Conditions: 150 mM KOAc, 10 mM MgCl2 and 150 mM bicine (pH 8.5), 24 C.
Chemical mapping of a 177-nucleotide RNA with DMS.
It was measured as part of the RMDB library 15KREP.
For DMS the reverse transcriptase was MarathonRT.

[RMDB]
RNA sequence: GGGAACGACUCGAGUAGAGUCGAAAACACACCCCCAGGCCGCGGGCCGGCUGCUCUUCUUUCUCUUUCGUCGUCAUCCUUGGCUAACCGCUCAAGUUCCUCCUCUUCCUCUCGGCUGAGGUGCUUCCGGGAUAUUUAUGUUCGCAUAAAUAUCCCGAAAAGAAACAACAACAACAAC
Reactivity to DMS in 0.01 (KOAc 150mM, MgCl2 10mM, bicine 150mM(pH8.5), 24C), signal-to-noise 1, nucleotides 027 to 126: c090a070c160a290c100c010c000c030c010a080g030g000c020c050g010c130g030g010g000c030c020g020g010c020u010g020c030u000c030u060u030c030u010u010u000c010u010c030u010u010u000c050g000u030c010g010u000c020a080u000c040c060u010u000g010g010c020u000a090a070c130c050g000c060u000c060a060a110g010u000u010c030c000u000c010c010u000c020u010u000c010c000u000c080u000c150g000g000c060u000g000a070g010g000u010g000c080u000u000c020